Conditions: 150 mM KOAc, 10 mM MgCl2 and 150 mM bicine (pH 8.5), 24 C. This 177-nucleotide RNA was probed chemically with 2A3 and DMS. The DMS profile rests on 2,350 reads.

RNA sequence: GGGAACGACUCGAGUAGAGUCGAAAAGGUUAGUGACAAGGACGUAUGGUUGUAUGACACUCUCAGCGCCUCAUUUAGUGAGCUCGGUCUCAACUAUAAUUUUGAUGAACGGACAAAGAAGAGAGAAAUAUAGUGCGGAGUUCGCUCCGCACUAUAUAAAAGAAACAACAACAACAAC
Reactivity to 2A3 in 0.01 (KOAc 150mM, MgCl2 10mM, bicine 150mM(pH8.5), 24C), signal-to-noise 2, nucleotides 027 to 126: g090g000u050u060a000g000u010g040a050c000a020a140g070g000a040c010g070u160a010u110g050g000u000u030g000u000a050u090g140a000c000a040c060u000c000u010c000a080g010c060g080c210c080u020c000a030u010u130u080a060g010u000g010a000g000c030u090c280g150g020u160c000u000c000a090a060c000u020a000u050a210a210u050u160u050u160g080a060u060g010a020a000c060g030g080a010c030a030a230a030g000a290a000g030a000g000a040g050a020a090
Reactivity to DMS in 0.01 (KOAc 150mM, MgCl2 10mM, bicine 150mM(pH8.5), 24C), signal-to-noise 2, nucleotides 027 to 126: g010g000u030u000a070g000u000g000a090c110a100a060g010g000a050c100g020u020a110u010g000g000u040u010g020u000a040u000g000a070c160a110c010u010c020u000c020a070g030c100g000c110c010u000c020a040u010u000u020a000g000u000g000a020g020c080u030c130g000g000u040c000u000c010a030a030c100u000a090u000a070a030u010u000u000u010g030a090u040g000a070a070c160g020g000a040c140a090a030a090g000a090a070g000a050g000a020g000a100a050